[RMDB]
RNA sequence: GGGAACGACUCGAGUAGAGUCGAAAAGAUAGUAUUCGUACUAUCAAAAAAGCGUACUACCGUGUGGUACUGGGAGCUGGGAAUCCCAAAUAGGAUUCACAGCAUCGAUCAGUACGUAACAUCACGGUAUCGCAAAAAACACCUAUUCGUAGGUGAACACGUGUAAGGAGUUCGCUCCUUACACGUGAAAAGAAACAACAACAACAAC
Reactivity to 2A3 in 0.01 (KOAc 150mM, MgCl2 10mM, bicine 150mM(pH8.5), 24C), signal-to-noise 2, nucleotides 027 to 156: g000a000u010a020g000u020a040u060u120c240g010u010a010c000u000a010u000c000a000a000a040a160a000a000g080c110g000u090a120c060u010a000c040c000g000u000g000u010g030g070u010a000c000u000g060g000g000a040g000c000u000g000g030g030a000a010u050c070c010c080a070a180a100u200a110g010g010a010u000u000c010a000c000a090g000c010a190u110c060g030a160u060c010a000g000u000a000c000g000u040a090a050c020a060u170c000a000c000g000g000u030a020u050c000g000c000a000a150a000a000a000a000c030a000c020c000u020a040u080u140c300g070u060a000g010g010u010g010a040a020
Reactivity to DMS in 0.01 (KOAc 150mM, MgCl2 10mM, bicine 150mM(pH8.5), 24C), signal-to-noise 1, nucleotides 027 to 156: g020a050u010a000g000u000a040u010u000c300g060u000a050c000u000a030u010c020a000a070a040a090a110a110g040c000g020u020a030c170u000a030c010c010g040u000g070u000g030g020u010a000c030u010g000g040g010a070g000c000u000g040g020g010a010a010u010c000c000c030a010a140a140u000a010g000g010a010u010u000c000a010c000a020g000c010a040u000c090g000a150u010c020a020g020u000a010c000g000u010a110a120c110a140u000c000a000c000g000g020u010a010u000c000g010c000a000a030a050a110a060a100c040a010c010c000u030a060u000u010c280g020u000a040g030g000u000g010a110a110
About this RNA
The record gives the reactivity of an RNA of 207 nucleotides to 2A3 and DMS. The DMS profile rests on 2,565 reads. It was measured as part of the RMDB library RNAMAK. For 2A3, 1,959 sequencing reads were counted. The RNA was probed in 150 mM KOAc, 10 mM MgCl2 and 150 mM bicine (pH 8.5) at 24 C.